[RMDB]
RNA sequence: GGGAACGACUCGAGUAGAGUCGAAAACUAAAUUUCAUUCGCGAGCCAUGCGCACCUGGCCUGCGCCCGUUCUUGUCGGAGGUCCCGAUUGCCACGGAUAUCGGUCCGGUCGAGGGCAUGACGGUGGAAAGAGGUGAAAUUUCGAUUUCACCUCUUUAAAAGAAACAACAACAACAAC
Reactivity to DMS in 0.01 (KOAc 150mM, MgCl2 10mM, bicine 150mM(pH8.5), 24C), signal-to-noise 7, nucleotides 027 to 126: c030u020a040a080a120u030u020u020c070a150u010u010c040g010c060g000a130g010c060c030a040u010g010c050g000c040a060c050c030u010g000g000c040c020u000g010c050g010c030c030c040g000u010u000c050u000u000g000u000c030g000g000a130g000g000u010c030c010c010g000a120u020u010g030c050c040a100c030g010g010a040u000a070u020c140g000g010u010c030c030g010g010u000c100g020a220g010g010g000c020a040u010g000a200c260g010g010u000g010g020
Reactivity to 2A3 in 0.01 (KOAc 150mM, MgCl2 10mM, bicine 150mM(pH8.5), 24C), signal-to-noise 6, nucleotides 027 to 126: c050u090a090a060a190u170u170u130c080a090u120u110c040g020c030g020a010g010c020c020a050u090g020c010g030c040a050c010c030u010g040g020c000c010u040g000c020g050c010c010c000g020u050u030c040u050u070g050u040c010g030g050a060g020g040u060c000c010c000g010a040u040u120g030c030c010a060c050g030g020a030u040a090u180c100g040g020u020c030c040g020g000u030c040g060a100g050g000g000c010a000u020g010a020c010g000g020u030g030g060
The record gives the reactivity of an RNA of 177 nucleotides to DMS and 2A3. The RNA was probed in 150 mM KOAc, 10 mM MgCl2 and 150 mM bicine (pH 8.5) at 24 C. 2A3 adducts were read by reverse transcription with SuperScript II with manganese.